[RMDB]
RNA sequence: GGGAACGACUCGAGUAGAGUCGAAAACGUGGGGUUGUGGGAUCCGUCUUGUCAAUUCUGCCGGAUUGGCCGACAGUGAGAAAUCAUCGUGUUAGUCGAAGUGGUCUGGAACGGCCUGUCGUAGAGGCUAUAACGAUCGGUUCGCCGAUCGUUAUAGAAAAGAAACAACAACAACAAC
Reactivity to DMS in 0.01 (KOAc 150mM, MgCl2 10mM, bicine 150mM(pH8.5), 24C), signal-to-noise 6, nucleotides 027 to 126: c090g030u010g000g010g000g020u010u010g010u010g000g020g000a040u010c030c040g000u000c040u010u010g000u010c050a050a090u000u010c030u010g030c080c070g000g010a120u000u010g000g010c000c180g010a040c040a050g010u000g010a070g000a070a100a100u010c030a050u010c040g020u010g010u010u010a080g010u010c030g000a060a090g030u010g000g020u000c030u010g000g010a100a100c100g000g000c010c020u000g000u000c030g020u020a080g000a110g010g000
Reactivity to 2A3 in 0.01 (KOAc 150mM, MgCl2 10mM, bicine 150mM(pH8.5), 24C), signal-to-noise 4, nucleotides 027 to 126: c060g020u090g000g000g020g020u040u110g040u110g030g000g010a010u010c010c010g060u030c020u070u090g050u050c000a020a090u090u000c010u050g060c030c030g050g020a050u050u090g010g030c000c010g000a010c010a040g040u050g060a110g070a060a070a060u050c030a020u050c030g010u030g060u150u180a070g050u040c010g000a060a020g040u050g060g020u000c040u060g060g000a130a010c000g010g000c000c010u040g020u030c030g000u040a040g010a020g150g020